[RMDB]
RNA sequence: GGGAACGACUCGAGUAGAGUCGAAAACAAUAUGCAUGGAUCCCAUGUACAAUAUUCAUGCGUAUUAGUAUGCUCGUACAUGGGAUUGCACUCAUGAAAAUGAGUGUAAUAUAUUAAACGAGCAUAAGGUAGACGUAGAUUUCGAUCUACGUCUACCAAAAGAAACAACAACAACAAC
Reactivity to 2A3 in 0.01 (KOAc 150mM, MgCl2 10mM, bicine 150mM(pH8.5), 24C), signal-to-noise 5, nucleotides 027 to 126: c020a000a040u010a000u030g020c000a000u000g000g000a030u060c010c000c010a000u030g020u060a100c100a180a170u110a050u250u010c000a000u000g000c000g000u010a000u000u020a120g160u040a020u010g000c000u000c000g030u040a040c020a000u010g000g000g040a000u000u000g010c010a010c000u000c000a000u020g160a090a060a020a020u010g000a000g000u000g010u000a000a000u000a000u010a020u020u230a090a090a000c000g000a000g000c000a000u010a010a010
Reactivity to DMS in 0.01 (KOAc 150mM, MgCl2 10mM, bicine 150mM(pH8.5), 24C), signal-to-noise 1, nucleotides 027 to 126: c050a090a010u010a000u000g000c000a020u000g010g000a010u010c010c000c000a000u000g000u000a180c300a080a040u080a000u000u010c000a000u000g010c000g030u000a000u010u000a190g010u030a000u000g010c000u000c020g000u030a030c000a000u020g000g000g000a000u010u010g000c000a000c000u050c000a000u000g000a000a050a110a000u000g000a020g010u020g040u000a000a000u000a070u010a130u010u030a020a140a050c000g000a030g050c000a000u000a010a000

Notes:
An RNA of 177 nucleotides, treated with 2A3 and DMS and read out base by base. For DMS the reverse transcriptase was MarathonRT. The RNA was probed in 150 mM KOAc, 10 mM MgCl2 and 150 mM bicine (pH 8.5) at 24 C. For DMS, 2,869 sequencing reads were counted.